[RMDB]
RNA sequence: GGGAACGACUCGAGUAGAGUCGAAAAGGCUCAUGUUGAUGACCCGCGCCCCCUGCGCCGCCGCGUAGUUCAGCCCGCCGAUGAGCGAGACGGUGGAGGCGCCGUCCUCGCCGAGCACCUUGACCGGACACUUACCUAGAUUCGUCUAGGUAAGUGUAAAAGAAACAACAACAACAAC
Reactivity to DMS in 0.01 (KOAc 150mM, MgCl2 10mM, bicine 150mM(pH8.5), 24C), signal-to-noise 9, nucleotides 027 to 126: g010g010c070u000c040a080u010g010u000u010g010a090u000g000a100c050c020c040g010c110g000c020c010c020c040c030u000g010c060g010c030c050g010c050c040g020c050g010u000a070g010u000u000c070a110g010c030c020c040g010c030c040g010a090u010g000a110g020c010g000a060g000a040c010g010g020u000g010g010a130g010g010c040g010c020c050g000u000c070c030u000c020g020c020c040g010a110g000c060a080c040c030u000u000g010a130c060c040g000g010
Reactivity to 2A3 in 0.01 (KOAc 150mM, MgCl2 10mM, bicine 150mM(pH8.5), 24C), signal-to-noise 4, nucleotides 027 to 126: g040g000c010u030c050a070u130g090u160u160g150a110u070g060a090c000c030c000g030c020g030c000c000c000c010c010u020g020c020g020c010c010g000c000c010g020c020g030u050a030g040u020u060c010a010g010c020c010c010g010c010c000g070a090u080g020a020g020c010g000a020g000a020c010g000g010u030g040g100a130g050g040c040g000c020c000g020u040c040c020u010c000g000c000c000g010a020g000c020a060c010c000u030u060g050a060c020c000g040g010